[RMDB]
RNA sequence: GGGAACGACUCGAGUAGAGUCGAAAACAAACAACAGCAUUCCUGCAGAAGCAUUCUGGAGCGCAGCAAUGCAGGCUUUAAUCUCAGCGUAUGGGUUAAGCAGAUGACAGAAUGAUCAACUGGCAUAACGAGCACAUCAUGCAAUGGUAUCGUCGCCGUAUACCAACGGAUUCGUCCGUUGGUAUACAAAAGAAACAACAACAACAAC
Reactivity to 2A3 in 0.01 (KOAc 150mM, MgCl2 10mM, bicine 150mM(pH8.5), 24C), signal-to-noise 7, nucleotides 027 to 156: c050a020a090a010c040a020a020c020a040g040c010a030u030u060c010c010u030g000c020a020g060a130a020g030c040a050u090u040c030u120g070g060a080g050c080g010c040a020g000c020a040a030u070g010c000a010g030g030c000u080u100u100a080a070u060c080u010c090a030g010c050g110u190a100u090g010g030g000u030u040a030a000g000c020a030g030a120u080g020a040c020a010g060a060a050u050g020a050u090c030a050a080c040u030g020g000c020a040u070a150a040c040g010a020g030c070a000c010a120u080c020a030u110g050c030a060a070u050g030g010u080a070u130c050g030u010c030g020c050c020
Reactivity to DMS in 0.01 (KOAc 150mM, MgCl2 10mM, bicine 150mM(pH8.5), 24C), signal-to-noise 3, nucleotides 027 to 156: c060a090a080a170c060a050a080c070a080g030c030a090u000u000c030c010u010g050c030a090g030a130a140g030c020a110u000u000c030u010g010g000a100g040c010g020c030a120g010c140a060a100u000g000c020a100g010g000c060u000u000u000a060a080u010c010u020c030a130g020c120g010u020a050u010g010g020g040u000u000a040a050g040c030a110g020a120u020g000a090c020a020g000a060a050u000g010a120u000c060a130a050c010u000g000g020c040a110u010a060a050c040g010a090g000c030a080c040a060u000c050a070u000g010c110a080a120u000g000g000u000a060u000c080g020u000c040g010c030c070

This 207-nucleotide RNA was probed chemically with 2A3 and DMS.
Conditions: 150 mM KOAc, 10 mM MgCl2 and 150 mM bicine (pH 8.5), 24 C.
Reactivities are rounded to 0.1 and cut off at 0 and 3.
For DMS the reverse transcriptase was MarathonRT.